Chemical mapping of a 177-nucleotide RNA with 2A3 and DMS.
Source: RMDB library 15KREP, as collected in RNAgym.
DMS adducts were read by reverse transcription with MarathonRT.
RNA sequence: GGGAACGACUCGAGUAGAGUCGAAAAGACCACAUGGUCAAGGCUGGUUUAGUCGGUGUGCUCACACUAGACAACCAGGACCUUAAUGGCAAGUGGUAUGAUUUUGGUGACUUCGUAAUCACUCAACCCAUAACUAAUACUUCGGUAUUAGUUAUGGAAAAGAAACAACAACAACAAC
Reactivity to 2A3 in 0.01 (KOAc 150mM, MgCl2 10mM, bicine 150mM(pH8.5), 24C), signal-to-noise 9, nucleotides 027 to 126: g050a000c010c010a010c020a050u250g030g000u020c010a010a010g010g000c000u000g000g030u030u040u140a050g000u000c010g010g010u010g010u020g070c070u130c110a010c000a000c010u060a140g000a010c000a000a000c000c000a000g010g020a030c000c000u050u070a160a110u140g000g000c010a030a030g010u010g030g020u030a070u070g170a140u030u130u110u140g020g000u010g010a020c010u060u020c170g100u130a040a050u010c010a000c010u110c030a020a080c010
Reactivity to DMS in 0.01 (KOAc 150mM, MgCl2 10mM, bicine 150mM(pH8.5), 24C), signal-to-noise 9, nucleotides 027 to 126: g010a040c000c000a010c010a070u010g010g010u000c010a040a020g020g010c010u000g000g000u000u010u000a080g020u000c000g010g010u000g010u000g020c300u010c270a060c000a010c000u000a060g020a010c010a060a020c000c000a000g010g000a110c010c000u000u000a080a130u010g010g000c010a050a050g030u000g000g010u000a060u000g010a140u010u010u010u000g010g010u000g000a030c070u000u010c270g000u010a130a190u000c010a010c010u010c190a080a100c220